[RMDB]
RNA sequence: GGGAACGACUCGAGUAGAGUCGAAAAGAUAUGGAGCACCGUCAUGCUAUCAGGAUUGGGAGCUCCCAAUCGGAAACGAUUGACGAGCGAAGAACAAUUCCUGAUAGCAUGACGGUGCUCCUAAGUCGAUAGAGAAAGUGUUCGCACUUUCUCUAUCAAAAGAAACAACAACAACAAC
Reactivity to DMS in 0.01 (KOAc 150mM, MgCl2 10mM, bicine 150mM(pH8.5), 24C), signal-to-noise 2, nucleotides 027 to 126: g010a110u000a300u000g000g000a010g010c000a010c000c020g000u010c010a010u000g000c000u000a010u020c010a000g010g000a050u000u000g000g010g020a180g010c010u000c000c020c000a010a010u000c020g000g010a130a150a230c000g000a020u000u000g000a100c250g020a000g030c000g030a080a170g000a150a240c010a020a020u010u010c000c020u000g000a010u000a000g030c000a000u000g000a010c000g000g000u000g010c000u000c000c000u000a010a080g010u010c150